The record gives the reactivity of an RNA of 177 nucleotides to DMS.
Source: RMDB library TTRDES, as collected in RNAgym.
The reactions ran in a buffer of 150 mM KOAc, 10 mM MgCl2 and 150 mM bicine (pH 8.5), at 24 C.
[RMDB]
RNA sequence: GGGAACGACUCGAGUAGAGUCGAAAAGAUAUGGAUACCCAGGGAGCUGGCGAUCGGAAACGAUCGAUCAGCGAAGAACUGGUGUAUCCUAAGUCAAAACGCACCCGUACUUCGGUACGGGUGCGAACUUAUCUCCCUUCUUCGGAAGGGAGAUAAGAAAAGAAACAACAACAACAAC
Reactivity to DMS in 0.01 (KOAc 150mM, MgCl2 10mM, bicine 150mM(pH8.5), 24C), signal-to-noise 1, nucleotides 027 to 126: g010a020u000a010u000g000g000a040u000a000c000c010c010a010g010g060g010a020g060c000u010g020g000c000g000a000u010c000g030g000a000a020a030c020g030a010u000c010g000a070u000c000a010g040c000g000a050a140g010a210a300c010u010g000g000u020g020u000a000u010c000c000u000a010a070g000u000c000a110a040a130a240c010g030c010a000c030c000c000g000u000a000c000u000u020c280g040g010u000a020c000g010g010g020u000g000c020g000a000a060